[RMDB]
RNA sequence: GGGAACGACUCGAGUAGAGUCGAAAAGUGUUGGUGAAUCCUUCACCGUGAUUCAGGCCGAGAGGGAGUCCACUCUCGUAAAUCCAGGCUCAACCAAAAGUAACUGCGAACAACAUCGUUCCUUUCGCUCGUAAGGCUGCUCCUGUAGCUGCUUAAAGAAUGAUUGUAAGUUCGCUUACAAUCAUUCAAAAGAAACAACAACAACAAC
Reactivity to DMS in 0.01 (KOAc 150mM, MgCl2 10mM, bicine 150mM(pH8.5), 24C), signal-to-noise 3, nucleotides 027 to 156: g010u010g020u000u000g000g000u010g010a090a140u000c030c040u000u000c030a090c040c030g000u010g000a110u000u000c070a110g040g030c130c010g010a060g020a050g010g000g030a130g010u010c040c060a050c010u010c010u000c020g020u000a050a080a070u010c050c060a090g000g020c020u000c040a090a140c060c030a020a080a070a140g010u000a040a070c050u010g000c010g030a030a060c090a100a090c060a080u000c030g020u020u000c000c010u020u000u000c020g020c000u000c040g000u000a100a120g010g020c030u000g020c020u010c110c080u000g010u000a110g020c000u000g020c000u000u000a050a090a240
Reactivity to 2A3 in 0.01 (KOAc 150mM, MgCl2 10mM, bicine 150mM(pH8.5), 24C), signal-to-noise 7, nucleotides 027 to 156: g100u090g030u100u080g020g070u070g050a070a080u140c040c020u080u090c070a060c060c040g020u090g020a090u070u110c060a050g110g000c030c000g010a000g000a000g010g030g000a010g010u000c020c010a030c020u000c000u000c000g030u060a020a000a010u030c020c000a000g000g010c000u000c020a060a110c050c050a090a070a030a080g080u100a090a070c060u060g020c040g010a020a010c050a030a030c010a200u050c020g010u000u020c000c000u030u060u050c040g020c040u070c080g130u090a070a030g050g000c010u020g010c010u020c040c090u170g090u160a020g000c020u050g000c010u020u060a020a010a030